[RMDB]
RNA sequence: GGGAACGACUCGAGUAGAGUCGAAAAGAUAUGGAACCCAGUAGGGAGCGUUUGGAUCGGAAACGAUCCUGACGCAUCGAUCUACGGGUUCCUAAGUCAAACAGGCACGCGUUCGCGCGUGCCUGAAGUGGAAAUUAUAGUUCGCUAUAAUUUCCACAAAAGAAACAACAACAACAAC
Reactivity to 2A3 in 0.01 (KOAc 150mM, MgCl2 10mM, bicine 150mM(pH8.5), 24C), signal-to-noise 1, nucleotides 027 to 126: g000a000u000a010u070g000g000a000a000c000c030c080a030g000u010a000g020g030g090a120g040c020g000u040u030u020g020g020a000u010c020g020g010a000a000a000c000g000a000u000c010c000u000g000a000c010g000c010a010u210c050g010a040u000c000u010a010c000g010g000g000u010u000c000c000u000a010a000g010u000c010a020a070a180c000a010g000g030c000a000c060g090c040g060u120u200c230g030c000g030c000g160u030g020c010c000u000g000a010a000
Reactivity to DMS in 0.01 (KOAc 150mM, MgCl2 10mM, bicine 150mM(pH8.5), 24C), signal-to-noise 1, nucleotides 027 to 126: g010a020u000a080u010g000g000a000a000c000c000c010a140g030u000a020g000g000g000a020g070c000g020u000u010u000g000g010a010u000c000g020g000a020a030a050c000g010a000u000c000c000u000g000a000c010g030c000a300u010c190g000a030u000c000u000a000c000g010g010g000u010u010c010c000u000a000a100g010u000c010a140a140a250c010a000g000g010c000a020c000g030c010g040u010u010c260g010c000g020c020g020u000g000c030c000u000g000a010a070
This 177-nucleotide RNA was probed chemically with 2A3 and DMS. The RNA was probed in 150 mM KOAc, 10 mM MgCl2 and 150 mM bicine (pH 8.5) at 24 C. It was measured as part of the RMDB library TTRDES.